[RMDB]
RNA sequence: GGGAACGACUCGAGUAGAGUCGAAAAUACGACAUUAUUCCUCCUUCAAUGACAAUGCCUUUAUGCGCUGACGUCGUCUCCAUGUAUUACCAUCACGAGUUUGAGGAAUUACGCCAGUGCGUUGCUCCGUAGUCGUCCGUUUCGACGGACGACUACGAAAAGAAACAACAACAACAAC
Reactivity to DMS in 0.01 (KOAc 150mM, MgCl2 10mM, bicine 150mM(pH8.5), 24C), signal-to-noise 1, nucleotides 027 to 126: u010a060c080g020a050c060a110u010u000a000u000u000c010c020u010c040c080u000u030c140a080a090u000g020a070c120a070a090u000g010c040c000u000u030u000a050u020g010c060g050c000u000g000a040c110g000u000c090g000u000c060u010c010c020a070u010g030u010a080u040u000a130c130c040a040u000c050a090c170g020a080g010u000u000u000g060a150g000g010a130a070u010u000a050c000g000c010c000a120g000u000g010c020g000u010u020g000c020u020c060
Reactivity to 2A3 in 0.01 (KOAc 150mM, MgCl2 10mM, bicine 150mM(pH8.5), 24C), signal-to-noise 1, nucleotides 027 to 126: u110a000c020g000a030c030a020u050u150a090u040u030c020c000u030c020c050u080u120c070a070a170u200g010a070c010a010a080u110g010c010c050u170u290u140a130u110g070c060g000c000u020g010a000c040g010u020c000g060u010c010u000c070c010a030u050g030u000a090u070u090a140c010c020a110u060c070a010c060g070a060g040u040u040u080g050a050g020g020a030a040u090u040a010c020g000c020c020a040g000u040g070c060g010u070u070g020c010u040c020